Record summary: This 207-nucleotide RNA was probed chemically with DMS and 2A3. DMS adducts were read by reverse transcription with MarathonRT. Reactivities are given for positions 27 through 156. The reactions ran in a buffer of 150 mM KOAc, 10 mM MgCl2 and 150 mM bicine (pH 8.5), at 24 C. It was measured as part of the RMDB library OK3TST. For DMS, 2,760 sequencing reads were counted.
RNA sequence: GGGAACGACUCGAGUAGAGUCGAAAAAUCAUCAAGGAAGAAGCGAUUGGAUGUUGAUCCUGGCCUAAUGUCACAAAACACUCUAAAAGAGAUGAUUAAGAUCCUAAAGCAUAUGCUGACUGAUAUUGGUAAGGAAAAUCUUGGCAGGUGUAGACUGGUAAUCCUCAUUCUUCGGAAUGAGGAUUACAAAAGAAACAACAACAACAAC
Reactivity to DMS in 0.01 (KOAc 150mM, MgCl2 10mM, bicine 150mM(pH8.5), 24C), signal-to-noise 2, nucleotides 027 to 156: a030u010c030a050u000c050a100a170g000g010a110a050g010a080a120g030c040g020a180u050u000g010g000a080u000g010u000u010g020a050u010c030c010u000g020g010c040c010u010a040a050u000g020u010c010a100c080a030a030a060a030c080a040c070u020c020u000a050a070a060a130g000a070g000a040u010g010a080u000u000a040a100g000a100u010c010c010u000a040a050a100g000c040a100u000a050u000g010c040u000g000a170c040u000g010a050u000a100u000u000g010g040u010a030a040g030g000a040a040a000a070u000c020u000u000g010g000c050a040g020g000u000g000u010a030g030a080c080u000g050
Reactivity to 2A3 in 0.01 (KOAc 150mM, MgCl2 10mM, bicine 150mM(pH8.5), 24C), signal-to-noise 3, nucleotides 027 to 156: a000u110c030a020u010c040a050a030g050g010a040a040g000a060a000g020c040g070a060u040u050g070g010a020u060g040u100u070g060a030u060c000c010u020g070g000c000c020u090a080a050u120g020u040c060a030c030a120a100a030a000c020a040c020u060c030u130a060a040a110a000g050a030g000a040u080g000a020u080u080a080a000g050a100u040c010c020u100a110a060a000g030c000a020u100a020u300g040c030u010g030a030c030u020g020a040u030a040u160u110g030g000u040a080a080g020g020a070a080a020a020u050c030u020u090g040g000c020a020g000g010u000g010u010a050g020a060c050u060g010